Source information
An RNA of 170 nucleotides, treated with DMS and 2A3 and read out base by base. Conditions: 150 mM KOAc, 10 mM MgCl2 and 150 mM bicine (pH 8.5), 24 C. Reactivities are given for positions 27 through 129. DMS adducts were read by reverse transcription with MarathonRT. For DMS, 7,494 sequencing reads were counted.
[RMDB]
RNA sequence: GGGAACGACUCGAGUAGAGUCGAAAAACAAUUAAGGGUUCCUUUCUGUGUGGUUCUUGUGGUAGUGUUGGUUACACCAAGGAGGGUAGUGUGAUCAAUUUCUGUUACAUGCAUCAAAUGGAACUUGUGAGCCAAACGUUCGCGUUUGGCAAAAGAAACAACAACAACAAC
Reactivity to DMS in 0.01 (KOAc 150mM, MgCl2 10mM, bicine 150mM(pH8.5), 24C), signal-to-noise 3, nucleotides 027 to 129: a020c110a100a030u080u030a120a090g010g000g160u010u000c030c010u040u020u070c140u030g040u040g000u000g040g030u000u010c060u010u000g020u030g040g070u010a000g060u020g000u060u000g000g030u010u010a040c080a080c050c100a160a160g100g000a060g100g040g000u060a130g020u030g040u080g000a040u050c030a020a020u000u000u000c000u010g020u000u000a030c060a050u060g000c080a050u020c080a030a050a060u020g010g040a010a070c050u080u000g030u070g020a230
Reactivity to 2A3 in 0.01 (KOAc 150mM, MgCl2 10mM, bicine 150mM(pH8.5), 24C), signal-to-noise 5, nucleotides 027 to 129: a020c070a020a050u210u270a060a120g070g020g000u020u000c000c000u010u150u040c090u050g120u000g040u060g060g070u020u100c000u020u000g000u010g040g000u000a000g000u030g010u030u000g000g000u000u000a000c010a000c020c030a090a060g210g050a080g020g140g030u100a080g010u010g010u000g020a000u000c000a000a000u130u280u000c000u000g000u010u020a010c000a000u030g050c000a000u000c010a020a020a070u050g010g020a000a000c010u020u040g130u090g120a040